The record gives the reactivity of an RNA of 177 nucleotides to 2A3 and DMS.
[RMDB]
RNA sequence: GGGAACGACUCGAGUAGAGUCGAAAACAGGCCGGGUCGCUGGGGGUGACGUUUGAGGCGCCGCUGAAGGAGUAUGUGCGCAUGGUGCGGAGCGCCAAGGCAGUCAUGGCCGAUCGCAGCCUCGCGCAAAAGACGUUAUAUUCGUAUAACGUCUUUUAAAAGAAACAACAACAACAAC
Reactivity to 2A3 in 0.01 (KOAc 150mM, MgCl2 10mM, bicine 150mM(pH8.5), 24C), signal-to-noise 5, nucleotides 027 to 126: c030a010g050g040c020c020g040g010g040u080c050g000c050u040g010g000g000g030g050u050g040a030c030g030u030u090u190g090a070g020g020c010g010c020c010g000c030u060g030a090a040g060g050a040g040u100a080u220g120u060g010c020g000c030a040u070g020g020u030g010c040g030g050a050g020c090g000c030c010a010a020g070g000c050a020g070u110c020a050u060g030g000c010c010g010a080u110c020g000c020a050g090c010c010u030c090g010c000g000c000
Reactivity to DMS in 0.01 (KOAc 150mM, MgCl2 10mM, bicine 150mM(pH8.5), 24C), signal-to-noise 9, nucleotides 027 to 126: c090a100g010g010c040c030g010g000g010u000c060g010c050u000g010g010g000g010g020u000g010a060c060g010u000u000u000g010a120g010g010c040g010c050c050g010c050u010g010a110a100g000g000a100g020u000a070u010g020u010g010c030g020c040a100u010g010g020u000g010c010g010g010a120g010c260g000c010c010a040a100g010g010c070a070g010u000c080a100u000g000g000c010c020g010a150u010c050g010c020a070g010c010c010u000c120g010c040g010c080
The RNA was probed in 150 mM KOAc, 10 mM MgCl2 and 150 mM bicine (pH 8.5) at 24 C.
For 2A3 the reverse transcriptase was SuperScript II with manganese.
Values cover nucleotides 27 to 126.
For 2A3, 10,357 sequencing reads were counted.
As a SHAPE reagent, 2A3 marks flexible, mostly unpaired nucleotides at the ribose 2'-OH.
DMS adducts were read by reverse transcription with MarathonRT.